An RNA of 177 nucleotides, treated with DMS and 2A3 and read out base by base. Values are in units of 0.01, from 0 to 300, in steps of 10. As a SHAPE reagent, 2A3 marks flexible, mostly unpaired nucleotides at the ribose 2'-OH. The RNA was probed in 150 mM KOAc, 10 mM MgCl2 and 150 mM bicine (pH 8.5) at 24 C. For 2A3, 951 sequencing reads were counted. It was measured as part of the RMDB libraries RFM100 and RFMREP.

RNA sequence: GGGAACGACUCGAGUAGAGUCGAAAAGAGCUCCCGGUGCCUGCGCCGAUACGCCCUCGGCCUCCACCGUGUUGAUCUGCCCACAAGGCGGCUUGACGAGAUUGCGACUGGAACGAAGUUGUCCUGAGGGCCUAAACAUAUUCGUAUGUUUAGGCCCAAAAGAAACAACAACAACAAC
Reactivity to DMS in 0.01 (KOAc 150mM, MgCl2 10mM, bicine 150mM(pH8.5), 24C), signal-to-noise 2, nucleotides 027 to 126: g020a080g000c050u010c030c020c000g010g010u010g000c100c040u000g020c100g010c050c010g000a110u010a060c110g000c090c060c060u020c040g020g010c030c000u030c080c010a040c020c040g020u010g030u000u000g000a060u000c010u000g000c000c000c010a170c180a150a190g000g000c000g000g000c070u010u020g000a070c030g000a120g010a080u030u010g000c010g010a060c030u000g000g050a080a130c110g020a080a140g000u020u000g010u010c060c040u000g000a300
Reactivity to 2A3 in 0.01 (KOAc 150mM, MgCl2 10mM, bicine 150mM(pH8.5), 24C), signal-to-noise 1, nucleotides 027 to 126: g090a030g030c010u040c060c000c020g000g020u010g070c010c010u050g060c040g000c000c000g020a030u040a080c020g140c000c040c010u000c010g040g000c000c000u000c000c020a010c000c060g050u060g060u030u080g030a060u050c010u020g020c000c010c030a040c030a010a040g040g000c020g020g000c000u020u100g010a070c020g000a030g020a160u000u090g000c010g020a030c060u050g010g010a060a020c030g000a090a040g000u020u010g010u020c000c000u020g000a020